About this RNA
Chemical mapping of a 177-nucleotide RNA with 2A3 and DMS. The reactions ran in a buffer of 150 mM KOAc, 10 mM MgCl2 and 150 mM bicine (pH 8.5), at 24 C. Reactivities are given for positions 27 through 126. For 2A3, 931 sequencing reads were counted. It was measured as part of the RMDB library OK1LIB.

[RMDB]
RNA sequence: GGGAACGACUCGAGUAGAGUCGAAAACAAAAGAUGGUCAAGAGUGACAUGUAGUAGUAACGAUCAGAUACCUAGUUUAGGAACUCUCUUAGCAUCGGUCUCUACCAAUGCCAUGACAGUUGGUAACCGGCAUAUCGCAGUUCGCUGCGAUAUGCCGAAAAGAAACAACAACAACAAC
Reactivity to 2A3 in 0.01 (KOAc 150mM, MgCl2 10mM, bicine 150mM(pH8.5), 24C), signal-to-noise 2, nucleotides 027 to 126: c040a000a060a000a000g050a000u110g000g010u040c000a020a020g060a140g130u090g000a080c000a020u300g050u180a040g010u000a010g000u020a130a000c000g000a080u130c040a000g000a050u060a050c060c000u060a120g180u220u190u150a060g020g060a120a100c030u030c000u000c040u130u150a000g030c070a020u000c050g040g000u030c010u010c000u020a060c000c020a020a020u130g070c040c000a000u100g040a100c030a130g030u010u050g100g000u020a080a000c000
Reactivity to DMS in 0.01 (KOAc 150mM, MgCl2 10mM, bicine 150mM(pH8.5), 24C), signal-to-noise 1, nucleotides 027 to 126: c160a000a020a130a010g000a140u010g020g160u000c020a100a160g000a100g030u000g000a050c010a030u020g030u050a130g060u000a040g130u000a000a020c000g000a040u000c150a030g000a010u000a150c000c000u000a110g000u050u000u000a050g080g000a050a050c040u110c090u000c110u000u000a000g000c180a150u040c000g000g040u080c080u000c010u000a230c000c000a130a020u000g040c070c090a000u000g000a090c120a120g000u070u000g000g000u010a000a110c120